[RMDB]
RNA sequence: GGGAACGACUCGAGUAGAGUCGAAAAUGUACUUCUGCCCCAUGACUGGCAAUCGCGGGUCCCAACCGAGCGGCAGCAGAAGUCCCGCGCGUUCCAUCGAGCUGAGGAUGCGGUGGAGGGUCACCGCUAACCAGAAGUUGUUCGCAACUUCUGGUUAAAAAGAAACAACAACAACAAC
Reactivity to DMS in 0.01 (KOAc 150mM, MgCl2 10mM, bicine 150mM(pH8.5), 24C), signal-to-noise 4, nucleotides 027 to 126: u010g010u000a080c040u000u000c020u010g020c020c070c020c040a110u000g000a090c100u000g020g000c100a130a160u000c040g020c050g010g010g010u000c020c010c020a090a160c100c070g010a090g010c090g010g000c130a070g000c030a030g010a040a050g000u000c030c010c010g000c040g010c050g000u000u000c010c010a080u000c050g000a090g010c050u000g000a110g010g000a100u000g010c000g010g010u000g000g000a140g010g010g010u000c010a040c010c010g010c040
Reactivity to 2A3 in 0.01 (KOAc 150mM, MgCl2 10mM, bicine 150mM(pH8.5), 24C), signal-to-noise 2, nucleotides 027 to 126: u060g020u020a030c000u040u020c000u050g030c000c000c010c000a060u150g060a050c070u080g050g030c020a070a090u080c060g000c000g020g030g020u000c000c010c000a020a030c020c020g030a030g030c060g080g000c020a060g000c000a010g020a080a000g020u010c010c000c000g000c010g010c010g090u070u020c020c010a060u090c020g030a030g040c030u050g060a030g110g070a060u120g030c030g000g000u020g000g080a140g080g060g020u140c020a010c040c030g000c000